RNA sequence: GGGAACGACUCGAGUAGAGUCGAAAAGAGGGAAUAUGAGGCUGCAUUGAGCAACAUGCAGAGGGAGUGGGUACAGAUAUGGAGGGGGUGAGGUGAUACAGAAUCCUUGGAGGCCCAGAACGUGUCCCUCACUGGUUAGUUUCGACUAACCAGUGAGAAAAGAAACAACAACAACAAC
Reactivity to DMS in 0.01 (KOAc 150mM, MgCl2 10mM, bicine 150mM(pH8.5), 24C), signal-to-noise 1, nucleotides 027 to 126: g010a100g040g010g030a080a140u000a210u000g030a200g010g000c020u000g020c000a030u000u020g000a240g000c210a090a040c150a030u000g000c020a010g030a110g000g000g000a070g050u010g000g000g010u010a090c180a140g000a090u000a110u000g000g000a070g010g000g010g050g040u000g000a050g000g000u000g000a060u000a040c110a050g020a090a090u000c030c010u000u010g020g000a060g000g010c050c110c030a220g000a010a100c160g000u010g010u000c020c070